[RMDB]
RNA sequence: GGGAACGACUCGAGUAGAGUCGAAAACACCUGUCAGGUAUACUUCUAUCGCAUUUUCAGGGACGGGAGCAUUUAUGACAGGAUGCGCCCUGAAGCCCUCAAGGACAUGGACCCUCCGGGUGUAACCAUAUAUCAUUUGGACCCCGUGACAUGCCUCACCGGAGUUAACUUUCGAGUUAACUCCGGUAAAAGAAACAACAACAACAAC
Reactivity to 2A3 in 0.01 (KOAc 150mM, MgCl2 10mM, bicine 150mM(pH8.5), 24C), signal-to-noise 2, nucleotides 027 to 156: c020a040c000c000u020g000u010c030a060g000g130u160a150u140a290c070u110u120c070u120a140u140c040g040c170a040u130u070u090u130c030a040g000g030g010a040c040g000g040g010a020g000c000a010u000u180u180a110u140g040a020c030a040g070g000a010u000g000c020g010c010c000c000u040g090a090a080g030c020c000c010u070c030a020a040g030g000a060c000a010u020g040g030a070c070c000c010u070c030c010g010g020g010u100g020u070a100a150c010c000a000u010a000u020a030u140c130a100u060u030u070g090g010a210c020c000c000c000g000u010g000a000c000a000u040g010c000c000u010c000
This 207-nucleotide RNA was probed chemically with 2A3. The reactions ran in a buffer of 150 mM KOAc, 10 mM MgCl2 and 150 mM bicine (pH 8.5), at 24 C. Reactivities are given for positions 27 through 156. It was measured as part of the RMDB library OK3TST.